[RMDB]
RNA sequence: GGGAACGACUCGAGUAGAGUCGAAAAACACUGAGCAGUAUAUAAAAUGGCCAUGGUACAUUUGGCUAGGUUUUAUAGCUGGCUUGCCGUAGACAAUUAUGCUUUGCUGUAUGACCACUUGCGAAAAUAGUACUACUAGUUUCGACUAGUAGUACUAAAAAGAAACAACAACAACAAC
Reactivity to DMS in 0.01 (KOAc 150mM, MgCl2 10mM, bicine 150mM(pH8.5), 24C), signal-to-noise 9, nucleotides 027 to 126: a070c050a070c090u000g000a060g010c000a030g010u000a090u000a050u010a020a020a040a060u010g010g010c000c010a020u000g010g010u000a090c220a120u000u000u000g000g010c010u000a020g010g010u000u000u000u000a030u000a020g010c010u000g010g010c030u000u000g020c040c030g010u000a060g010a060c070a050a080u010u010a080u000g010c030u000u000u000g000c060u000g000u010a040u010g000a130c030c020a070c120u000u000g010c070g000a070a060a080a120
Reactivity to 2A3 in 0.01 (KOAc 150mM, MgCl2 10mM, bicine 150mM(pH8.5), 24C), signal-to-noise 8, nucleotides 027 to 126: a000c050a010c040u060g020a010g000c010a020g050u020a030u010a010u030a300a080a030a050u050g010g000c010c000a020u030g070g060u280a140c080a220u070u060u040g010g000c000u010a030g000g060u020u040u020u040a050u010a010g010c010u020g140g020c010u020u050g030c020c030g050u040a030g020a100c030a050a100u160u050a080u240g010c020u070u070u100g020c040u020g020u060a070u060g040a020c000c020a040c060u070u110g020c040g060a060a020a020a070